Conditions: 150 mM KOAc, 10 mM MgCl2 and 150 mM bicine (pH 8.5), 24 C. Chemical mapping of a 177-nucleotide RNA with DMS and 2A3. 2A3 is a SHAPE reagent: it acylates the 2'-hydroxyl of flexible nucleotides of all four kinds. For DMS, 2,670 sequencing reads were counted. For DMS the reverse transcriptase was MarathonRT. Values cover nucleotides 27 to 126.

RNA sequence: GGGAACGACUCGAGUAGAGUCGAAAAGAUAUGGAUAGCCAGGUACACAGCAUCGAUCUCGGAAACGAGGGAGCUGGUACUGGCUAUCCUAAGUCAAAACCUACACUGGGUUCGCCCAGUGUAGGAACUUAUUAUCGGUCUUCGGACCGAUAAUAAGAAAAGAAACAACAACAACAAC
Reactivity to DMS in 0.01 (KOAc 150mM, MgCl2 10mM, bicine 150mM(pH8.5), 24C), signal-to-noise 3, nucleotides 027 to 126: g010a050u000a300u000g000g010a020u010a000g000c000c000a010g020g020u020a000c010a070c010a000g030c000a270u020c190g000a050u000c000u010c010g000g000a120a140a120c010g010a010g010g000g010a020g020c000u000g000g010u000a010c000u000g000g000c000u000a000u000c000c000u000a000a060g020u000c030a100a090a090a130c000c000u000a000c000a020c000u000g010g020g010u010u020c300g010c000c000c000a000g000u000g000u000a000g000g000a010a020
Reactivity to 2A3 in 0.01 (KOAc 150mM, MgCl2 10mM, bicine 150mM(pH8.5), 24C), signal-to-noise 3, nucleotides 027 to 126: g010a020u070a030u130g000g000a000u000a000g010c010c010a010g060g160u100a020c300a010c010a060g050c010a090u300c090g090a080u010c010u000c010g030g000a140a100a090c010g000a010g020g010g010a020g000c000u000g010g000u010a000c010u010g000g030c000u000a010u000c000c000u000a000a000g010u010c000a020a060a060a140c000c000u000a000c000a000c000u010g020g050g020u060u100c250g170c040c000c000a000g010u000g000u000a000g000g000a000a000